[RMDB]
RNA sequence: GGGAACGACUCGAGUAGAGUCGAAAAAAUCGGCUGCCUUGUGCAAUUCGUCGAUAAUGACCGGCACGAGUUCCACAAGCUCGUCGCGCCCCGUUGCGGCAUGGAUGCCAAACAGCCCCGUAUCGGAAGCAUUAUCCGGAUUCGUCCGGAUAAUGCUAAAAGAAACAACAACAACAAC
Reactivity to 2A3 in 0.01 (KOAc 150mM, MgCl2 10mM, bicine 150mM(pH8.5), 24C), signal-to-noise 1, nucleotides 027 to 126: a000a000u070c010g000g000c000u000g000c010c010u070u150g080u060g040c000a000a100u110u060c010g030u000c030g030a020u090a230a060u170g090a020c040c000g090g020c050a010c030g020a050g010u110u010c030c020a020c030a020a000g010c010u060c090g050u040c080g000c020g000c050c000c020c000g050u040u070g000c020g010g000c000a020u130g110g020a020u150g070c020c000a090a130a040c020a060g000c000c000c010c000g000u030a090u090c020g020g040a020
Reactivity to DMS in 0.01 (KOAc 150mM, MgCl2 10mM, bicine 150mM(pH8.5), 24C), signal-to-noise 2, nucleotides 027 to 126: a080a050u010c070g020g000c010u010g010c160c000u000u000g000u020g010c160a070a090u000u000c110g000u000c030g010a040u010a100a080u000g000a090c080c050g030g010c040a050c020g000a010g020u000u000c140c070a060c170a090a070g020c020u000c130g020u000c090g010c170g010c030c020c010c030g020u000u000g020c100g010g000c080a070u010g030g010a050u000g040c060c080a030a060a280c120a070g000c010c000c000c010g020u000a040u010c050g010g000a180